Source: RMDB library OK3TST, as collected in RNAgym. This 207-nucleotide RNA was probed chemically with 2A3 and DMS. 2A3 is a SHAPE reagent: it acylates the 2'-hydroxyl of flexible nucleotides of all four kinds. The DMS profile rests on 2,296 reads. The 2A3 profile rests on 2,086 reads.
RNA sequence: GGGAACGACUCGAGUAGAGUCGAAAAGGCUACAGUAUGGGCCACAUCUUUCUGUUCACAGCUUUCCUUGGAAGAUCAGCUUUUGACAUAUAGAUUCUCCUACUCCCUGGCUUCUUUGCCUGCUGAUCUCAUCCUGACAUACCAGAAGUGGGCUGUGCGUCUAGAUGUCAUUCGUGACAUCUAGACGAAAAGAAACAACAACAACAAC
Reactivity to 2A3 in 0.01 (KOAc 150mM, MgCl2 10mM, bicine 150mM(pH8.5), 24C), signal-to-noise 3, nucleotides 027 to 156: g030g000c040u100a060c050a080g060u090a110u230g020g010g030c070c050a070c020a050u030c000u030u170u020c070u040g030u080u040c020a020c020a020g000c020u000u120u190c020c060u070u070g000g040a030a030g010a010u020c000a010g000c020u120u210u180u220g100a080c100a030u280a030u030a110g080a130u130u070c060u040c040c030u030a060c020u020c010c000c010u020g000g000c000u020u050c000u100u200u140g040c010c010u020g000c000u000g010a010u010c020u010c030a070u020c000c010u040g040a050c030a120u200a130c050c070a030g020a210a010g060u070g010g000g000c000u000g000u000g020
Reactivity to DMS in 0.01 (KOAc 150mM, MgCl2 10mM, bicine 150mM(pH8.5), 24C), signal-to-noise 1, nucleotides 027 to 156: g010g030c030u000a030c040a090g000u000a110u010g000g040g000c040c030a050c060a100u000c030u000u000u000c040u020g000u010u010c030a040c030a100g000c020u000u020u000c040c050u000u000g030g010a090a030g000a040u000c020a060g050c050u000u000u000u000g020a020c060a130u000a140u010a090g000a120u000u000c010u000c010c000u000a130c040u000c050c010c050u000g020g000c030u000u000c050u000u010u000g010c040c010u000g080c000u000g020a040u000c030u000c040a090u000c040c030u000g000a150c060a160u000a140c040c040a100g040a110a160g000u000g060g020g000c010u000g030u000g020